The record gives the reactivity of an RNA of 207 nucleotides to DMS and 2A3.
For DMS, 4,055 sequencing reads were counted.

[RMDB]
RNA sequence: GGGAACGACUCGAGUAGAGUCGAAAACAUUGCUUGCAUUUUCUCAUUGAAACAACAAGCAAAGUCACCAUCUGAGGUUGAGGAGGUCAAAGAGAAGGUUGGGAGCAAAAGGAAAUUCAGAGUAGUGGCAGAAUGGCAAAGUGGAGUCAUGAAAUAACCUACAAAAUAACUUCGGUUAUUUUGUAGGAAAAGAAACAACAACAACAAC
Reactivity to DMS in 0.01 (KOAc 150mM, MgCl2 10mM, bicine 150mM(pH8.5), 24C), signal-to-noise 2, nucleotides 027 to 156: c040a200u020u000g000c010u010u000g000c010a260u010u000u000u020c020u010c230a230u000u010g020a020a030a020c020a050a040c010a010a010g020c000a030a010a150g020u000c030a100c040c010a080u000c050u000g000a070g020g020u000u000g010a120g020g010a110g030g000u000c050a030a060a130g010a140g020a040a060g010g020u010u020g000g000g000a070g020c050a070a110a030a110g000g030a060a080a090u010u010c030a080g000a090g040u000a050g050u000g020g030c010a090g010a030a070u000g010g000c040a040a050a060g010u010g000g010a070g030u000c030a060u000g000a060a040a060u000a060a210
Reactivity to 2A3 in 0.01 (KOAc 150mM, MgCl2 10mM, bicine 150mM(pH8.5), 24C), signal-to-noise 5, nucleotides 027 to 156: c020a040u010u030g000c000u000u010g000c010a200u030u030u070u030c060u020c060a250u120u300g000a030a030a030c050a020a000c010a040a020g000c010a010a010a000g080u070c050a030c080c010a060u030c050u090g020a040g040g050u080u090g050a040g020g020a020g020g050u050c050a060a100a050g070a030g010a060a040g020g020u090u070g020g000g030a010g010c020a020a040a040a060g030g020a050a050a030u080u050c010a010g010a020g070u060a000g010u030g010g000c010a000g010a040a040u050g020g000c010a030a030a030g030u040g040g000a000g020u020c010a010u060g070a030a040a010u260a010a020
2A3 adducts were read by reverse transcription with SuperScript II with manganese.